[RMDB]
RNA sequence: GGGAACGACUCGAGUAGAGUCGAAAAGAGCUAAUAUCUACUUCGUUUGUGCAUAUCACUAUAGGGAAGCUGAUGGGUUGCGAGAAAUCGCAGUGCCUAGUGGAAUGAACGUUCAAGCCGGCUCGAAGGGUAUAGAAUUCUUCGGAAUUCUAUACCCAAAAGAAACAACAACAACAAC
Reactivity to 2A3 in 0.01 (KOAc 150mM, MgCl2 10mM, bicine 150mM(pH8.5), 24C), signal-to-noise 5, nucleotides 027 to 126: g050a020g000c040u070a060a010u040a130u200c020u060a050c010u050u040c020g140u010u050u090g030u020g000c050a050u040a040u210c040a020c030u080a050u140a160g060g030g010a050a040g030c030u070g020a080u060g010g010g060u060u000g010c000g000a010g030a020a040a040u020c010g000c000a000g010u050g130c000c000u020a030g010u040g020g080a090a060u070g020a050a010c010g010u030u020c040a020a000g040c020c020g000g020c020u030c020g010a080a050
Reactivity to DMS in 0.01 (KOAc 150mM, MgCl2 10mM, bicine 150mM(pH8.5), 24C), signal-to-noise 5, nucleotides 027 to 126: g010a070g010c030u040a070a070u030a080u010c030u030a100c040u000u000c040g020u000u000u020g010u000g010c080a100u030a120u010c020a020c030u000a050u030a080g000g000g010a060a070g010c050u020g010a080u010g010g000g010u000u000g010c020g010a030g000a090a040a140u000c010g020c000a040g020u010g030c000c010u000a030g030u010g000g000a050a040u010g010a030a050c060g010u010u010c080a050a080g020c090c060g010g010c020u000c020g020a110a100

The record gives the reactivity of an RNA of 177 nucleotides to 2A3 and DMS. For 2A3, 4,664 sequencing reads were counted. The RNA was probed in 150 mM KOAc, 10 mM MgCl2 and 150 mM bicine (pH 8.5) at 24 C. For DMS the reverse transcriptase was MarathonRT. It was measured as part of the RMDB library OK1LIB.